Structure probing data (DMS and 2A3) for a 177-nucleotide construct. Values are in units of 0.01, from 0 to 300, in steps of 10. Values cover nucleotides 27 to 126. Conditions: 150 mM KOAc, 10 mM MgCl2 and 150 mM bicine (pH 8.5), 24 C. For 2A3 the reverse transcriptase was SuperScript II with manganese. The data come from the RNA Mapping Database (RMDB), library TTRDES. DMS (dimethyl sulfate) methylates the pairing face of unpaired adenines and cytosines.
RNA sequence: GGGAACGACUCGAGUAGAGUCGAAAAGAUAUGGACCACGGUACGGGAGCUCAACAGCAAACUCGGAAACGAGUUUGACAUGAGCAGUAUUGGUCCUAAGUCAAAGCCCUAGGCUUCGGCCUAGGGCGAGGGUUUAAAGGUUCGCCUUUAAACCCUCAAAAGAAACAACAACAACAAC
Reactivity to DMS in 0.01 (KOAc 150mM, MgCl2 10mM, bicine 150mM(pH8.5), 24C), signal-to-noise 7, nucleotides 027 to 126: g010a050u000a300u010g000g010a020c000c010a090c300g020g010u000a010c010g020g000g040a190g000c000u000c010a050a100c300a220g000c000a000a000a000c000u000c000g000g000a080a110a150c000g010a030g020u000u000u000g000a050c110a190u010g000a010g040c010a080g000u000a010u000u010g000g000u000c000c000u010a030a090g000u000c040a090a110a170g010c000c000c000u000a010g000g010c000u010u010c200g030g010c000c000u000a000g000g000g000c010
Reactivity to 2A3 in 0.01 (KOAc 150mM, MgCl2 10mM, bicine 150mM(pH8.5), 24C), signal-to-noise 4, nucleotides 027 to 126: g020a010u080a040u160g000g000a000c020c030a070c300g160g020u060a020c010g080g110g180a100g010c010u010c030a040a210c050a170g060c000a000a010a020c000u000c000g000g030a040a060a050c010g000a010g010u000u010u010g020a020c010a090u140g010a010g000c010a010g000u020a040u030u090g000g000u010c000c000u020a140a020g050u040c050a170a140a090g000c000c000c000u000a000g000g000c000u020u090c300g160g000c000c000u010a010g000g020g000c010